[RMDB]
The record gives the reactivity of an RNA of 207 nucleotides to DMS and 2A3. 2A3 adducts were read by reverse transcription with SuperScript II with manganese. Values cover nucleotides 27 to 156. Source: RMDB library OK3TST, as collected in RNAgym. Reactivities are rounded to 0.1 and cut off at 0 and 3. The RNA was probed in 150 mM KOAc, 10 mM MgCl2 and 150 mM bicine (pH 8.5) at 24 C. The 2A3 profile rests on 2,097 reads.
RNA sequence: GGGAACGACUCGAGUAGAGUCGAAAACAAAAUCAAAAGAGUAUCAGUUAAUUAAAAGCGAUAUUGAUGAACUCAAUAAAAAACGUAUGAAUAUUCAAGAAGAAGUAGAUGAUCAACUAGAUGAAUUAGAUUCACAGUUAAAUGAAUUAAACGCUGAACACGUAAAUUCAUUCGUGAAUUUACGUGUAAAAGAAACAACAACAACAAC
Reactivity to DMS in 0.01 (KOAc 150mM, MgCl2 10mM, bicine 150mM(pH8.5), 24C), signal-to-noise 2, nucleotides 027 to 156: c040a110a090a080a090u000c080a120a150a100a160g010a100g000u000a050u000c030a100g010u000u000a070a080u000u000a060a080a070a170g000c010g000a100u000a040u000u000g000a140u000g000a150a220c040u030c020a030a060u010a010a020a120a130a120a070c070g010u000a090u000g010a090a190u000a050u000u010c040a050a100g000a080a090g010a070a070g030u000a040g020a080u000g010a090u000c030a050a010c030u010a060g000a100u000g000a090a050u000u000a070g000a250u000u020c010a040c050a070g000u000u000a020a030a110u010g000a040a030u010u000a010a070a120c010g020c080u000g020a120
Reactivity to 2A3 in 0.01 (KOAc 150mM, MgCl2 10mM, bicine 150mM(pH8.5), 24C), signal-to-noise 3, nucleotides 027 to 156: c030a030a040a040a060u130c060a070a080a060a120g020a020g030u050a050u060c060a030g050u090u150a070a200u140u120a080a090a070a040g030c030g010a060u020a010u130u060g030a030u090g020a070a050c020u060c020a010a040u210a040a130a030a040a020a000c050g060u130a060u090g040a050a010u090a080u150u140c060a030a020g030a050a040g010a040a000g160u050a020g020a100u130g010a020u050c020a010a030c050u010a060g030a250u020g030a030a070u070u070a050g030a070u050u050c030a020c000a050g030u030u080a040a130a050u050g030a000a020u090u110a250a060a010c050g010c080u020g030a020